[RMDB]
An RNA of 207 nucleotides, treated with 2A3 and read out base by base. For 2A3, 435 sequencing reads were counted. 2A3 adducts were read by reverse transcription with SuperScript II with manganese.
RNA sequence: GGGAACGACUCGAGUAGAGUCGAAAAUCGAUGUCGAAGAGGAGAGGCAUUGCUCGCAGCUCAUGUCCAAGCUGCUACAUUAUUACUACAAAGAUAUACUGUCCAUGUUCGCCACUACGCCGGUACCAAAGUCUAUAGUUUCGCUGACGAACCUGAAAGUUUGACUACACUUCGGUGUAGUCAAACUAAAAGAAACAACAACAACAAC
Reactivity to 2A3 in 0.01 (KOAc 150mM, MgCl2 10mM, bicine 150mM(pH8.5), 24C), signal-to-noise 1, nucleotides 027 to 156: u140c070g000a000u080g000u080c060g060a090a020g000a060g140g030a000g000a010g020g000c000a030u000u110g040c040u120c120g020c000a000g000c000u040c080a080u290g030u090c080c040a060a000g000c000u010g000c000u000a000c010a070u030u160a020u010u010a010c060u030a010c080a070a230a090g120a070u100a000u030a150c050u040g100u030c010c000a100u050g080u070u040c030g010c000c000a060c000u040a040c030g000c010c010g010g000u040a080c000c000a100a040a000g000u010c000u020a040u050a090g030u020u020u010c060g040c010u030g100a070c020g060a030a060c010c000u090g010a150a060